[RMDB]
RNA sequence: GGGAACGACUCGAGUAGAGUCGAAAACUACUGAAAAUACAAAAUUAGCUGGGCAUGGUGGCACAUUCCUGUAAUUCUGGCUACUCAGGAGGCUGAGGCAGGAGAAGCACUUGAACCCGGGAGGCGGAGGUUGCAGUGAGCCAAGAUCGCACCAUUACCUGAUUAUACGUUUCGACGUAUAAUCAGGAAAAGAAACAACAACAACAAC
Reactivity to 2A3 in 0.01 (KOAc 150mM, MgCl2 10mM, bicine 150mM(pH8.5), 24C), signal-to-noise 1, nucleotides 027 to 156: c050u120a010c020u060g020a020a070a130a040u100a100c040a140a100a080a150u150u100a070g000c060u080g000g020g010c050a090u050g020g010u030g070g060c030a000c000a050u060u100c020c000u020g030u100a070a110u130u050c010u050g000g080c010u030a090c050u070c050a010g000g050a030g070g020c040u040g050a020g050g000c060a040g000g030a010g030a030a020g010c000a000c010u020u020g030a030a010c030c000c000g040g000g000a070g050g000c070g020g020a060g040g010u010u080g000c010a010g010u030g090a010g000c000c000a050a040g050a030u100c060g010c030a050c020c000a010u080u110a080

This 207-nucleotide RNA was probed chemically with 2A3. The reactions ran in a buffer of 150 mM KOAc, 10 mM MgCl2 and 150 mM bicine (pH 8.5), at 24 C. For 2A3 the reverse transcriptase was SuperScript II with manganese.